[RMDB]
RNA sequence: GGGAACGACUCGAGUAGAGUCGAAAAUGUUCCGGAUUCGUCCGGAACAAAAUAUGGCACCGGUACUCGUCGAUACAAUCCCACGGAGAUGGACCGGGUGAAAAACCACUUAGUUCGCUAAGUGGAAAGAUAAGCUCUACUUCGGUAGAGCUUAUCUAAAAGAAACAACAACAACAAC
Reactivity to 2A3 in 0.01 (KOAc 150mM, MgCl2 10mM, bicine 150mM(pH8.5), 24C), signal-to-noise 1, nucleotides 027 to 126: u060g000u020u000c000c000g040g010a020u000u030c220g050u020c000c000g000g000a010a010c000a000a000a000a000u190a080u040g150g000c050a030c080c040g000g000u050a070c040u100c100g060u000c000g010a010u030a260c080a090a110u030c000c030c010a010c020g070g040a120g000a050u050g020g000a000c020c040g030g040g000u050g030a080a050a000a000a000c000c000a000c000u010u000a010g040u070u000c290g020c150u000a000a010g000u000g010g000a100a000
Reactivity to DMS in 0.01 (KOAc 150mM, MgCl2 10mM, bicine 150mM(pH8.5), 24C), signal-to-noise 2, nucleotides 027 to 126: u000g010u010u000c020c000g020g000a020u000u020c220g020u000c010c000g000g010a000a000c000a030a000a100a100u000a070u010g010g030c100a090c040c000g000g000u000a050c050u000c060g000u000c010g000a170u000a020c210a070a130u010c020c000c010a160c070g000g020a100g000a080u000g000g000a030c000c000g000g000g050u000g000a010a050a050a100a130c010c000a000c000u000u000a010g010u000u020c230g010c000u000a010a000g000u000g020g000a000a000
Source: RMDB library M2PK50, as collected in RNAgym.
This 177-nucleotide RNA was probed chemically with 2A3 and DMS.
For 2A3, 1,316 sequencing reads were counted.
For DMS the reverse transcriptase was MarathonRT.
2A3 adducts were read by reverse transcription with SuperScript II with manganese.
Values cover nucleotides 27 to 126.
2A3 is a SHAPE reagent: it acylates the 2'-hydroxyl of flexible nucleotides of all four kinds.